RNA sequence: GGGAACGACUCGAGUAGAGUCGAAAAAUGACGAAUUACCCGGCACCACCCCGCCGAUUGUCACCGAGGCCAUCUUCAAUCCGUUCCAAAGCGAAAACGAAUCUACCUCAGACGAAGAUGAUGAGCGCAAAAAACGUGGCGGAAGACCCGCUACGCCGUAUAGGAUCCACUUCGGUGGAUCCUAUACAAAAGAAACAACAACAACAAC
Reactivity to 2A3 in 0.01 (KOAc 150mM, MgCl2 10mM, bicine 150mM(pH8.5), 24C), signal-to-noise 1, nucleotides 027 to 156: a020u110g000a010c040g030a010a030u100u090a100c020c030c000g080g000c010a050c050c000a110c040c000c000c030g000c000c030g090a040u030u000g010u090c030a000c000c080g110a090g090g000c080c020a050u020c050u010u020c000a000a120u020c030c010g020u020u060c050c000a120a130a000g030c070g090a010a110a080a080c010g020a010a030u040c080u090a060c010c010u060c020a030g000a070c050g040a020a050g030a010u090g000a040u030g030a030g000c030g000c080a040a030a030a020a030a020c060g000u000g010g000c000g000g030a000a010g030a010c000c000c280g000c010u300a000c010g000c010c020